RNA sequence: GGGAACGACUCGAGUAGAGUCGAAAAUGAAGGCUUCGACCCAAUACAAGCCAUCACCUACCAAUGUCCUCGGGGAUAGCGCGCUAAUCAACCGCUCUACUGAGCGAAAAGCUGCAAUGCUUGCGACCCGCAAGAAUCUCUUCGGAGAUUCUUGCGGAAAAGAAACAACAACAACAAC
Reactivity to 2A3 in 0.01 (KOAc 150mM, MgCl2 10mM, bicine 150mM(pH8.5), 24C), signal-to-noise 3, nucleotides 027 to 126: u160g000a070a000g080g000c000u120u060c110g300a090c020c000c000a000a010u280a130c080a050a020g010c020c030a040u020c000a040c010c010u100a150c030c020a060a110u150g030u050c010c000u000c000g020g010g030g050a060u050a060g060c080g000c000g010c040u020a090a030u100c050a050a020c010c000g020c000u000c010u090a190c150u060g000a010g000c010g010a110a080a010a000g000c000u010g050c000a020a140u230g010c030u000u030g000c020g020a050c000
Reactivity to DMS in 0.01 (KOAc 150mM, MgCl2 10mM, bicine 150mM(pH8.5), 24C), signal-to-noise 1, nucleotides 027 to 126: u040g030a160a030g000g000c040u000u000c050g080a200c030c080c100a000a010u020a110c110a050a040g000c050c000a100u000c030a000c180c000u000a100c050c110a010a000u010g000u000c050c000u000c060g000g000g000g080a030u020a000g020c160g090c050g000c000u000a160a090u040c060a120a100c210c070g000c000u000c050u060a040c020u110g000a000g040c040g070a040a010a050a040g000c020u000g040c200a070a130u000g000c040u000u000g000c100g000a080c060